Structure probing data (2A3 and DMS) for a 177-nucleotide construct. Reactivities are given for positions 27 through 126. 2A3 adducts were read by reverse transcription with SuperScript II with manganese.

[RMDB]
RNA sequence: GGGAACGACUCGAGUAGAGUCGAAAAUCACAGGGUGAUCGCGUAGGUCGGCGUUCUGUUCGGGUGGAAGCACGGGUGAGAACUCGUGUGGACCGUUCAGUAACGAAAAUCCUGGUCAUAGUAGCAGUGAAUUUGAAAAGUUCGCUUUUCAAAUUCAAAAAGAAACAACAACAACAAC
Reactivity to 2A3 in 0.01 (KOAc 150mM, MgCl2 10mM, bicine 150mM(pH8.5), 24C), signal-to-noise 9, nucleotides 027 to 126: u080c030a020c010a060g010g020g030u070g030a030u030c010g020c130g200u270a040g010g050u060c010g020g000c010g000u010u000c000u010g000u000u000c020g010g000g030u300g120g020a010a000g000c000a000c000g000g000g000u000g020a080g020a020a010c000u000c000g000u010g000u010g000g010a000c000c000g000u000u000c010a010g010u100a020a010c010g020a080a020a010a010u030c000c010u010g010g010u030c020a060u070a180g100u090a030g080c060a030g070
Reactivity to DMS in 0.01 (KOAc 150mM, MgCl2 10mM, bicine 150mM(pH8.5), 24C), signal-to-noise 6, nucleotides 027 to 126: u020c040a120c020a030g010g010g010u010g010a020u010c010g010c260g020u050a140g010g010u010c040g010g010c010g000u000u000c000u000g000u000u000c010g010g000g000u010g020g010a180a220g000c010a010c010g010g000g000u000g010a220g000a150a020c010u000c000g000u000g020u000g000g010a050c000c000g000u000u000c000a010g000u060a010a010c010g000a050a070a140a050u010c010c000u010g010g000u020c100a090u020a100g000u020a060g020c160a110g020